[RMDB]
An RNA of 177 nucleotides, treated with 2A3 and DMS and read out base by base. The RNA was probed in 150 mM KOAc, 10 mM MgCl2 and 150 mM bicine (pH 8.5) at 24 C. The 2A3 profile rests on 4,020 reads. For DMS the reverse transcriptase was MarathonRT.

RNA sequence: GGGAACGACUCGAGUAGAGUCGAAAAGAUAUUUAUGUCCACGACUACUGUUUACUGGACCAUAUGAUAAUCAGUAGAUUGACUCUUAUUCUUAAGGACACUGCAAGGAACUGGUACCUAGGAAUAACGGUAUACGUGAUUUCGAUCACGUAUACCGAAAAGAAACAACAACAACAAC
Reactivity to 2A3 in 0.01 (KOAc 150mM, MgCl2 10mM, bicine 150mM(pH8.5), 24C), signal-to-noise 5, nucleotides 027 to 126: g040a020u100a120u180u220u090a120u150g020u000c010c010a040c030g050a010c010u030a010c000u050g030u030u060u020a020c030u060g100g060a110c020c030a080u110a130u260g150a180u040a050a030u030c000a000g020u030a010g040a210u040u060g070a070c010u020c020u080u020a010u060u000c010u020u050a070a080g020g010a020c070a060c130u050g040c060a110a140g080g060a180a080c050u080g060g030u060a070c000c000u010a010g010g010a030a010u050a050a040
Reactivity to DMS in 0.01 (KOAc 150mM, MgCl2 10mM, bicine 150mM(pH8.5), 24C), signal-to-noise 3, nucleotides 027 to 126: g000a120u000a050u010u000u000a060u010g020u000c000c040a070c090g010a070c020u000a040c060u010g000u000u000u000a020c070u000g020g020a080c190c180a100u000a070u000g020a100u000a030a030u010c010a010g010u000a030g010a180u000u010g000a080c140u000c040u000u010a030u000u000c020u010u000a030a050g010g000a120c020a090c040u000g020c160a100a100g000g020a130a080c090u010g000g000u000a050c010c010u000a020g010g010a060a010u000a010a100